[RMDB]
RNA sequence: GGGAACGACUCGAGUAGAGUCGAAAAAGCCUCCAUACGUGGAGGCAAUAGAUCAGUGCUUGGCACCUAGUAAGCACUCAGUAUAUACUUGUUGAGUGCCUGCUAUGUGCCAGGCAUUGUGCUGAAAUACCUUAGUCGUGUUCGCACGACUAAGGUAAAAAGAAACAACAACAACAAC
Reactivity to DMS in 0.01 (KOAc 150mM, MgCl2 10mM, bicine 150mM(pH8.5), 24C), signal-to-noise 3, nucleotides 027 to 126: a060g000c000c010u000c000c010a030u010a040c150g040u020g010g000a000g000g000c000a020a010u020a030g010a080u020c010a020g010u000g000c000u000u000g020g000c010a020c010c020u000a010g000u010a020a120g020c000a010c000u000c010a010g000u010a010u020a150u040a110c280u040u000g010u000u000g010a030g000u000g000c020c040u000g000c000u000a020u010g000u000g020c010c010a000g020g000c010a000u000u010g000u010g000c070u010g010a100a120a100
Reactivity to 2A3 in 0.01 (KOAc 150mM, MgCl2 10mM, bicine 150mM(pH8.5), 24C), signal-to-noise 3, nucleotides 027 to 126: a000g010c010c000u010c000c000a030u040a050c300g110u040g000g000a000g000g020c000a000a000u040a020g000a020u160c010a000g010u000g010c000u000u000g000g000c000a010c010c010u000a000g000u010a050a020g010c000a000c000u000c000a000g040u020a060u040a040u070a250c190u130u160g010u040u000g040a000g000u000g000c000c010u010g000c010u000a000u000g000u000g000c000c000a000g000g000c000a000u000u000g000u000g000c010u060g040a040a120a090
This 177-nucleotide RNA was probed chemically with DMS and 2A3. It was measured as part of the RMDB libraries RFM100 and RFMREP. The RNA was probed in 150 mM KOAc, 10 mM MgCl2 and 150 mM bicine (pH 8.5) at 24 C.